[RMDB]
RNA sequence: GGGAACGACUCGAGUAGAGUCGAAAAUUUUACGCGAAUGGUGUUACCGUAUUAGGAAAAGGGAGCAAAGAGCGUUUUGUACCGUUUGGUGCUUAUUGUAGACAAAGCAUCGAAAAUUAUUUAGAACACCUAGCACUCUAUUCGUAGAGUGCUAGGUAAAAGAAACAACAACAACAAC
Reactivity to 2A3 in 0.01 (KOAc 150mM, MgCl2 10mM, bicine 150mM(pH8.5), 24C), signal-to-noise 2, nucleotides 027 to 126: u020u030u020u060a010c010g010c000g040a010a030u120g100g030u020g060u020u070a040c010c010g010u120a100u100u200a110g120g060a020a090a050a050g000g020g010a050g000c000a030a070a030g030a010g040c020g000u000u020u040u060g050u000a030c000c020g000u000u010u070g020g000u000g000c020u020u030a100u100u220g170u140a080g010a090c130a040a020a000g000c000a020u000c000g030a000a010a010a000u180u090a080u030u170u060a070g060a070a000c000
Reactivity to DMS in 0.01 (KOAc 150mM, MgCl2 10mM, bicine 150mM(pH8.5), 24C), signal-to-noise 2, nucleotides 027 to 126: u000u010u010u000a060c040g010c020g020a110a130u000g000g000u010g000u000u000a120c060c040g000u010a080u000u010a100g030g000a040a080a040a140g000g010g000a150g010c040a040a050a060g000a300g020c030g010u000u000u020u000g000u000a160c030c060g000u000u000u010g000g010u000g000c000u030u040a060u040u020g030u000a150g020a090c120a080a040a000g000c000a010u000c010g010a040a040a100a070u000u010a050u020u000u000a100g000a150a070c210